The record gives the reactivity of an RNA of 177 nucleotides to DMS and 2A3. For DMS, 12,256 sequencing reads were counted.

RNA sequence: GGGAACGACUCGAGUAGAGUCGAAAAUGAGAAGCAUUCGUGCUUCUCAGAAAUGCUGCCCAAAGAGGACCUGGGGCUGUCUGGGCUGCUAAACUCAUCAGCUAACCGCGAUCUUCGGAUCGCGGAAAUCAACUAAUGGAUUCGUCCAUUAGUUGAUAAAAGAAACAACAACAACAAC
Reactivity to DMS in 0.01 (KOAc 150mM, MgCl2 10mM, bicine 150mM(pH8.5), 24C), signal-to-noise 7, nucleotides 027 to 126: u000g000a010g010a010a000g010c000a030u000u020c190g020u000g010c000u000u000c000u000c000a010g000a100a090a090u010g010c060u000g000c010c010c020a040a080a100g000a110g000g000a080c070c060u010g010g010g010g010c030u000g010u000c050u000g000g020g010c020u000g010c060u000a060a080a100c060u000c040a100u000c140a070g000c120u000a110a190c000c000g000c000g000a010u000c000u000u020c180g020g000a010u000c000g010c000g000g010a010a030
Reactivity to 2A3 in 0.01 (KOAc 150mM, MgCl2 10mM, bicine 150mM(pH8.5), 24C), signal-to-noise 5, nucleotides 027 to 126: u030g000a000g000a010a000g000c010a010u060u140c210g080u050g010c000u010u000c000u000c000a000g000a000a070a010u120g000c020u040g000c000c010c000a070a120a010g140a020g030g020a040c040c120u160g030g040g060g030c030u020g100u000c040u030g000g020g000c010u030g020c020u050a050a050a050c050u060c060a120u040c040a080g070c050u080a080a080c010c000g000c000g000a000u010c010u040u040c180g090g000a010u000c000g010c000g000g000a010a000
The RNA was probed in 150 mM KOAc, 10 mM MgCl2 and 150 mM bicine (pH 8.5) at 24 C.